[RMDB]
RNA sequence: GGGAACGACUCGAGUAGAGUCGAAAAACUAUAAAGAUACCAGGCGUUUCCCCCUGGAAGCUCCCUCGUGUUCCGACCCUGCCGCUUACCGGAUACCUGUCCGCCUUUCUCCCUUCGGGAAGCGUGGCUUCCAUUGGGGAUUCGUCCCCAAUGGAAGAAAAGAAACAACAACAACAAC
Reactivity to DMS in 0.01 (KOAc 150mM, MgCl2 10mM, bicine 150mM(pH8.5), 24C), signal-to-noise 1, nucleotides 027 to 126: a110c080u010a150u010a130a100a170g010a160u010a040c020c010a050g000g010c060g000u000u000u000c020c020c040c040c020u000g000g000a090a150g030c060u000c040c020c030u000c060g020u000g010u010u010c040c010g000a170c060c000c010u000g010c030c010g000c040u000u000a110c080c040g020g000a080u020a060c090c030u000g000u000c010c010g000c030c020u000u010u000c060u000c020c030c030u010u000c040g010g000g010a040a040g020c050g020u000g030g010